[RMDB]
RNA sequence: GGGAACGACUCGAGUAGAGUCGAAAAUAGCCUUUGACAGAGGAGCCAUACAGAUCAGGCCCAGAUCGUCUAUGCGUGAGAGCACGCAGACCAGGGUGCAAGUCCUGGGAGACUCCAACCAGUACAGCGUAGUGUCGUUGUUCGCAACGACACUACGAAAAGAAACAACAACAACAAC
Reactivity to DMS in 0.01 (KOAc 150mM, MgCl2 10mM, bicine 150mM(pH8.5), 24C), signal-to-noise 2, nucleotides 027 to 126: u000a060g000c000c000u000u010u020g000a070c190a140g020a080g000g000a060g000c060c070a110u000a150c240a190g000a060u000c060a070g020g000c010c000c040a020g000a050u000c060g050u000c080u030a060u010g000c030g010u000g010a270g000a170g030c050a060c000g020c000a010g000a170c010c050a060g000g000g040u000g000c140a070a060g020u000c000c000u000g010g000g000a070g010a060c000u000c040c040a040a110c080c020a100g010u000a110c090a090g000
Reactivity to 2A3 in 0.01 (KOAc 150mM, MgCl2 10mM, bicine 150mM(pH8.5), 24C), signal-to-noise 4, nucleotides 027 to 126: u130a000g050c020c000u080u100u090g120a080c100a060g040a070g080g000a010g030c050c020a110u150a120c070a030g090a070u120c060a050g050g000c020c000c000a040g040a070u090c050g020u010c050u040a080u100g010c010g020u020g020a250g020a100g300c020a010c000g020c000a010g010a040c000c010a030g000g070g010u080g080c060a100a000g050u000c000c010u000g010g020g000a040g030a010c030u020c030c010a030a070c020c010a030g050u090a120c050a020g020